[RMDB]
RNA sequence: GGGAACGACUCGAGUAGAGUCGAAAAAAAAACGGCAGCAAGCCGAGCAACGCGAGCAACGCGAGCAAGUACAGCAAGUACAGCAACAUGAGCAACAUGAGCAAGUAGAGCAACUAGAGCAAAAAAAGGUUCAAUAUAUGUUCGCAUAUAUUGAACCAAAAGAAACAACAACAACAAC
Reactivity to DMS in 0.01 (KOAc 150mM, MgCl2 10mM, bicine 150mM(pH8.5), 24C), signal-to-noise 2, nucleotides 027 to 126: a050a030a060a120a090c050g040g000c020a050g000c120a100a130g020c030c010g000a160g020c060a070a030c030g000c050g010a190g010c060a160a050c110g020c030g010a070g010c030a030a050g010u000a010c040a050g000c020a060a070g000u010a020c060a070g000c020a040a020c050a000u000g000a060g020c130a070a060c090a040u000g000a050g020c040a020a040g000u000a030g000a040g000c070a030a050c040u000a050g000a100g010c070a020a000a070a070a020a060a130
Reactivity to 2A3 in 0.01 (KOAc 150mM, MgCl2 10mM, bicine 150mM(pH8.5), 24C), signal-to-noise 1, nucleotides 027 to 126: a020a020a010a010a020c020g070g000c000a060g040c060a080a080g010c050c020g010a010g010c030a130a060c030g030c030g060a030g080c040a060a100c050g000c010g010a000g010c020a010a070g010u030a030c000a030g000c040a100a040g050u000a040c010a040g050c020a030a070c000a090u090g020a010g090c020a010a010c000a050u040g050a030g040c000a040a010g030u070a040g040a010g020c010a000a000c000u080a000g000a010g050c000a030a030a000a000a000a050a130